[RMDB]
RNA sequence: GGGAACGACUCGAGUAGAGUCGAAAAAAAAAAGAUAUGGAGCUAACUCAGUACCGUGUUGUCAGGCUGGAUUUCCAACGGUAUGUCGGAAACGACAUACGGUUGGCCGGUCAGCCUUGGAUUUACACGGGAACUGUUAGCUCCUAAGUCAAAAAAACGUAAUUUAUCCGUUCGCGGAUAAAUUACGAAAAGAAACAACAACAACAAC
Reactivity to 2A3 in 0.01 (KOAc 150mM, MgCl2 10mM, bicine 150mM(pH8.5), 24C), signal-to-noise 1, nucleotides 027 to 156: a000a000a000a010a010a030g040a030u070a060u110g000g000a000g000c000u000a000a000c000u000c050a000g000u010a010c010c000g000u000g000u010u020g020u010c030a000g020g010c020u040g010g070a090u090u060u060c000c000a010a010c020g190g010u000a000u000g000u000c000g000g020a070a110a060c010g000a000c000a000u000a000c010g090g000u010u000g010g000c010c020g140g030u020c000a010g020c010c020u020u100g120g000a030u300u250u100a000c000a000c000g000g000g000a000a000c000u000g000u000u000a000g010c000u000c000c000u000a000a000g000u000c000a000a000a000a080a180a000a030
Notes
Source: RMDB library RNAMAK, as collected in RNAgym. Structure probing data (2A3) for a 207-nucleotide construct. For 2A3, 1,469 sequencing reads were counted. Reactivities are rounded to 0.1 and cut off at 0 and 3.